[RMDB]
The record gives the reactivity of an RNA of 207 nucleotides to DMS and 2A3.
The 2A3 profile rests on 1,985 reads.
The RNA was probed in 150 mM KOAc, 10 mM MgCl2 and 150 mM bicine (pH 8.5) at 24 C.
RNA sequence: GGGAACGACUCGAGUAGAGUCGAAAAGCGUACUACCAUCCUGGGAGGCGUUGAAAGCAGCUCCCCACCAUCUCCCAAAUAGGAGAUGAGGCUGCUGGAGCCUUAGGGAUGGUAUCGCAAAUCUGGACCUUCUCCGUUCGCGGAGAAGGUCCAGAAAGUACAGAAUAUGGUUCGCCAUAUUCUGUACAAAAGAAACAACAACAACAAC
Reactivity to DMS in 0.01 (KOAc 150mM, MgCl2 10mM, bicine 150mM(pH8.5), 24C), signal-to-noise 2, nucleotides 027 to 156: g010c030g020u000a060c070u000a040c010c000a030u000c000c020u010g010g010g010a000g050g020c000g000u020u000g030a180a130a070g010c010a020g010c010u000c160c050c050c030a300c190c000a040u000c010u010c000c030c010a100a200a300u010a060g000g020a030g000a030u000g000a290g000g000c010u010g010c040u000g010g000a250g010c020c010u000u000a300g010g000g000a040u000g000g000u000a000u000c030g000c010a080a080a090u000c010u030g000g000a030c010c010u000u010c000u000c000c000g050u000u010c300g040c010g030g010a020g000a010a000g000g020u000c000c000a000g010a010a010a210
Reactivity to 2A3 in 0.01 (KOAc 150mM, MgCl2 10mM, bicine 150mM(pH8.5), 24C), signal-to-noise 2, nucleotides 027 to 156: g010c020g010u100a080c030u000a000c020c000a000u020c000c000u130g080g300g070a010g000g000c050g090u140u070g040a040a020a010g000c010a000g010c010u150c050c060c020c010a030c030c000a000u010c000u030c000c020c020a170a300a080u230a050g000g010a000g000a000u000g000a010g020g000c000u000g000c000u000g010g020a000g000c000c010u000u020a030g020g000g000a000u000g000g010u010a010u040c000g020c000a000a180a000u000c000u000g000g000a000c000c000u000u020c000u010c000c000g050u060u050c250g010c000g120g010a000g010a000a000g010g000u000c000c000a000g000a000a000a000